[RMDB]
RNA sequence: GGGAACGACUCGAGUAGAGUCGAAAACAAGUUGGCACCAGAGUUGGGGAGUUUUAAGAGGUUUAGCAGCCUGGCCGUCAAUACCCACAACGGUUAUGGAGGCAAGGGAAACAGGCCCUUGAAAAGAAGGUAAUGUGGAGUGGGUAGCCUCUGUACAACCUAAAUGCUAUUUCGAUAGCAUUUAGGUAAAAGAAACAACAACAACAAC
Reactivity to DMS in 0.01 (KOAc 150mM, MgCl2 10mM, bicine 150mM(pH8.5), 24C), signal-to-noise 2, nucleotides 027 to 156: c040a080a260g020u010u000g000g010c000a060c040c020a040g020a080g040u000u010g040g030g020g000a090g000u000u000u000u000a070a090g000a070g010g020u000u010u000a110g040c060a110g000c030c010u010g020g030c020c000g020u010c040a040a130u000a160c040c010c040a080c070a090a050c080g000g020u000u010a070u010g000g000a090g000g000c000a060a050g030g020g030a080a100a110c080a150g020g020c020c000c010u000u000g010a070a070a090a140g010a060a050g000g000u010a060a060u000g010u000g000g000a110g020u000g010g030g030u000a080g000c040c000u000c010u000g010u000a070c090a170
Reactivity to 2A3 in 0.01 (KOAc 150mM, MgCl2 10mM, bicine 150mM(pH8.5), 24C), signal-to-noise 3, nucleotides 027 to 156: c020a020a080g040u070u030g020g000c030a040c050c000a020g030a000g060u050u070g000g030g090g000a060g030u050u100u060u110a120a060g030a030g030g060u090u070u140a040g020c050a000g010c040c020u020g010g030c030c010g000u050c010a040a080u080a150c010c020c000a030c020a040a020c030g100g000u110u030a060u180g050g000a010g030g000c020a000a010g010g020g010a040a180a050c050a020g110g000c010c000c020u020u010g050a070a060a020a020g090a050a010g060g010u120a080a080u140g020u060g050g030a070g010u040g000g010g010u000a010g010c010c020u020c000u030g020u040a080c030a030